[RMDB]
RNA sequence: GGGAACGACUCGAGUAGAGUCGAAAAAGCAUGCCGACGGGGUGACCGCGCACUUCGCCGACGGCUCCACCGCCACCGCCGACAUCCUGAUCGGCGCCGACGGCAUCCGCUCCACCGUGCGCGGGCAGUCCGCUACGGAUUUCGAUCCGUAGCGGACAAAAGAAACAACAACAACAAC
Reactivity to DMS in 0.01 (KOAc 150mM, MgCl2 10mM, bicine 150mM(pH8.5), 24C), signal-to-noise 5, nucleotides 027 to 126: a060g020c080a030u000g040c010c010g000a140c030g010g010g010g010u000g010a110c000c000g020c010g000c000a030c030u000u000c110g000c040c020g000a070c090g000g010c050u000c090c140a100c080c050g010c020c030a120c190c010g010c010c000g010a030c050a110u010c130c090u010g000a160u000c010g000g000c010g000c040c020g010a070c000g000g000c020a050u000c080c100g010c050u010c020c010a130c150c120g000u000g010c010g010c000g020g000g000c200a110
Reactivity to 2A3 in 0.01 (KOAc 150mM, MgCl2 10mM, bicine 150mM(pH8.5), 24C), signal-to-noise 5, nucleotides 027 to 126: a000g020c020a020u060g000c010c010g020a040c010g020g000g000g020u060g070a120c010c020g000c000g010c000a000c030u180u170c120g030c030c010g040a080c060g030g000c010u040c020c050a110c040c040g030c020c020a030c010c010g000c000c010g010a020c010a090u220c030c140u180g060a300u010c000g010g000c000g010c000c000g040a030c010g000g000c010a020u030c020c040g020c030u060c040c020a070c040c060g000u020g010c000g000c020g000g010g000c010a020
Structure probing data (DMS and 2A3) for a 177-nucleotide construct. DMS adducts were read by reverse transcription with MarathonRT. For 2A3 the reverse transcriptase was SuperScript II with manganese. The DMS profile rests on 5,244 reads.